The record gives the reactivity of an RNA of 177 nucleotides to 2A3 and DMS. The DMS profile rests on 1,490 reads. Source: RMDB library OK1LIB, as collected in RNAgym. The 2A3 profile rests on 1,362 reads. Conditions: 150 mM KOAc, 10 mM MgCl2 and 150 mM bicine (pH 8.5), 24 C.
RNA sequence: GGGAACGACUCGAGUAGAGUCGAAAAUUAUGCCUAUAUAACAGGAUUUUAUGGAAUAUUAAUGACCGAAAAUGUUAACUUUGCAGGGUAUCAAAUCAUUGGUGUUCUAUCAAGUACCCUCACAGCCUCCACUCCAAAAUUUCGAUUUUGGAGUGGAAAAAGAAACAACAACAACAAC
Reactivity to 2A3 in 0.01 (KOAc 150mM, MgCl2 10mM, bicine 150mM(pH8.5), 24C), signal-to-noise 1, nucleotides 027 to 126: u120u030a120u130g010c000c000u140a080u000a070u020a240a270c130a060g030g010a050u030u120u000u000a030u040g040g000a060a010u000a010u130u030a070a050u040g030a000c010c010g100a080a090a000a000u070g010u060u040a080a050c000u040u100u110g020c080a030g090g000g000u020a020u180c040a000a000a190u080c000a050u030u020g010g020u010g090u130u000c050u050a010u000c040a000a110g080u040a030c000c000c000u000c010a070c010a030g060c010c040
Reactivity to DMS in 0.01 (KOAc 150mM, MgCl2 10mM, bicine 150mM(pH8.5), 24C), signal-to-noise 1, nucleotides 027 to 126: u000u000a100u000g000c040c030u000a090u030a160u000a070a040c200a090g000g000a160u050u020u000u040a110u000g000g000a120a090u000a030u000u000a020a030u000g000a150c120c120g010a090a020a150a070u020g000u000u010a010a090c060u000u030u000g000c160a100g000g000g000u000a050u000c080a030a140a130u090c090a040u030u010g030g000u010g000u040u000c050u010a000u000c050a000a050g000u000a020c000c030c000u050c050a100c140a070g000c170c060